[RMDB]
RNA sequence: GGGAACGACUCGAGUAGAGUCGAAAAGAUAUGGACCGUGAACAACAGCGAUGAAGUUCUUUGAUCACACUGGGUCGGAAACGACCUUGUGGGAGAACUCAUCGCUGUUGUUCACGGUCCUAAGUCACAUACAUUACUGGUUCGCCAGUAAUGUAUGAAAAGAAACAACAACAACAAC
Reactivity to DMS in 0.01 (KOAc 150mM, MgCl2 10mM, bicine 150mM(pH8.5), 24C), signal-to-noise 3, nucleotides 027 to 126: g010a040u000a300u020g000g000a010c010c000g030u000g000a030a020c000a010a020c000a030g000c030g010a030u010g000a120a070g020u000u000c000u000u000u010g010a150u020c210a160c000a040c190u010g000g010g040u000c000g000g000a090a100a220c010g010a020c010c000u000u000g010u000g000g000g000a020g000a010a000c000u010c000a010u000c000g030c000u000g000u000u000g010u000u010c000a000c000g010g000u000c000c010u000a000a030g010u000c040a270
Record summary
Conditions: 150 mM KOAc, 10 mM MgCl2 and 150 mM bicine (pH 8.5), 24 C. Chemical mapping of a 177-nucleotide RNA with DMS. For DMS, 5,655 sequencing reads were counted. It was measured as part of the RMDB library TTRINS.